Structure probing data (2A3 and DMS) for a 177-nucleotide construct.
For 2A3 the reverse transcriptase was SuperScript II with manganese.
For 2A3, 2,785 sequencing reads were counted.
RNA sequence: GGGAACGACUCGAGUAGAGUCGAAAAGUCGUGCACGCGUGGCGGCACCGCACCGCCGAAUUGACGGCGCUGCCCGGGGUAGCGCAGGUGUUCUGCUUCGAGAACCGUGGUGAGGAGAUCGGGGUGAACGCCCCAUUCUAUUCGUAGAAUGGGGCGUAAAAGAAACAACAACAACAAC
Reactivity to 2A3 in 0.01 (KOAc 150mM, MgCl2 10mM, bicine 150mM(pH8.5), 24C), signal-to-noise 4, nucleotides 027 to 126: g060u070c040g010u050g050c140a030c090g070c040g080u130g010g020c010g000g030c040a060c050c040g030c040a070c040c010g070c010c020g010a050a090u070u140g070a050c020g030g000c000g020c020u020g000c000c010c040g050g030g000g020u030a040g000c000g000c050a010g100g000u060g030u060u010c010u090g070c010u040u080c020g050a030g020a050a030c020c020g070u160g000g100u170g080a060g010g030a070g000a040u050c030g010g000g010g000u050g040a030
Reactivity to DMS in 0.01 (KOAc 150mM, MgCl2 10mM, bicine 150mM(pH8.5), 24C), signal-to-noise 3, nucleotides 027 to 126: g080u010c070g030u000g000c080a120c060g000c070g050u010g000g040c010g010g030c030a060c000c060g020c090a100c070c030g020c050c020g000a170a120u030u050g000a100c060g000g030c040g000c060u000g010c040c090c030g010g020g000g000u010a100g000c030g010c030a040g000g000u010g000u030u010c020u010g000c060u000u040c090g000a020g020a250a180c070c010g010u040g010g020u020g000a080g000g000a070g020a200u010c030g000g000g010g010u000g000a130